[RMDB]
An RNA of 170 nucleotides, treated with DMS and 2A3 and read out base by base. For DMS the reverse transcriptase was MarathonRT. The reactions ran in a buffer of 150 mM KOAc, 10 mM MgCl2 and 150 mM bicine (pH 8.5), at 24 C. 2A3 adducts were read by reverse transcription with SuperScript II with manganese. For 2A3, 26,621 sequencing reads were counted. Source: RMDB library 15KLIB, as collected in RNAgym.
RNA sequence: GGGAACGACUCGAGUAGAGUCGAAAAAGCCAAGAACCCACCCAUCGGGGUCCGACGUUCCUACCCUUUCUUACCUGUGGCCGGCAUGGUCCCAGCCUCCUCGCUGGCGCCGGCUGGGCAACAUUCCAACCAGUAAGCUUCGGCUUACUGAAAAGAAACAACAACAACAAC
Reactivity to DMS in 0.01 (KOAc 150mM, MgCl2 10mM, bicine 150mM(pH8.5), 24C), signal-to-noise 7, nucleotides 027 to 129: a100g040c010c010a100a090g050a110a130c060c020c020a050c030c020c010a060u000c070g010g010g000g020u000c020c010g050a200c030g000u000u000c000c000u000a150c060c030c010u030u040u030c000u010u010a130c070c010u030g030u000g010g050c000c010g000g030c000a070u000g000g000u050c190c010c000a080g000c030c120u010c110c070u050c140g000c000u000g020g030c260g010c010c010g010g060c000u030g020g010g050c020a050a030c090a110u040u050c050c060a060a100c200
Reactivity to 2A3 in 0.01 (KOAc 150mM, MgCl2 10mM, bicine 150mM(pH8.5), 24C), signal-to-noise 8, nucleotides 027 to 129: a000g050c010c010a020a010g070a080a080c020c000c010a050c020c020c000a110u130c070g030g010g010g000u050c020c030g050a090c030g030u040u020c010c010u030a090c010c000c000u040u130u070c050u070u120a130c010c040u060g020u110g120g010c000c000g010g010c020a070u120g040g030u110c000c000c030a020g010c000c010u140c010c010u090c070g010c020u010g000g000c010g000c020c000g010g000c000u020g000g000g020c020a060a050c000a100u130u020c030c010a030a050c010